[RMDB]
RNA sequence: GGGAACGACUCGAGUAGAGUCGAAAAACUGGCCGAAACCCGAGGACGAUGUCGAGCUGCUGGUCGACCUGGAGGAGUGGUCGGAUAUGCGGUGCCUCACUCCGAAACUGACGGGGCCGAUCGCGUUGGCGUUGUCGCGGACACGGUCCCGGGAUCGUCGUAGUACAACGUUCGCGUUGUACUACGAAAAAGAAACAACAACAACAAC
Reactivity to DMS in 0.01 (KOAc 150mM, MgCl2 10mM, bicine 150mM(pH8.5), 24C), signal-to-noise 1, nucleotides 027 to 156: a120c080u000g020g010c070c020g030a110a090a090c070c010c000g000a130g000g020a050c020g020a070u000g020u000c010g000a080g060c040u020g030c020u000g020g020u000c020g010a080c000c020u000g020g030a300g010g010a130g000u020g020g030u020c020g030g000a160u000a060u000g010c100g020g030u010g030c020c020u000c020a070c020u010c010c010g030a060a050a190c060u000g000a160c060g020g020g000g000c010c000g000a070u000c060g030c000g000u000u000g020g000c030g040u010u000g010u000c020g000c030g010g020a110c030a110c000g020g000u000c000c000c010g030g000g000a140u000c070g020
Reactivity to 2A3 in 0.01 (KOAc 150mM, MgCl2 10mM, bicine 150mM(pH8.5), 24C), signal-to-noise 4, nucleotides 027 to 156: a000c030u020g020g000c030c000g060a100a080a050c020c000c000g030a060g110g010a000c040g060a060u050g040u080c030g030a030g050c120u160g000c050u100g120g010u010c020g000a040c000c010u080g030g020a090g010g000a020g020u030g000g010u150c080g010g020a090u110a070u220g100c110g040g100u130g040c010c000u050c000a010c000u000c020c010g030a090a070a060c080u100g020a030c030g000g010g000g000c040c010g000a050u020c000g000c010g000u010u050g040g000c030g000u020u020g030u020c020g000c020g020g000a030c040a010c180g000g000u000c000c000c030g010g010g030a070u110c060g020
An RNA of 207 nucleotides, treated with DMS and 2A3 and read out base by base. For 2A3, 3,092 sequencing reads were counted. Values cover nucleotides 27 to 156. The DMS profile rests on 3,077 reads. The reactions ran in a buffer of 150 mM KOAc, 10 mM MgCl2 and 150 mM bicine (pH 8.5), at 24 C.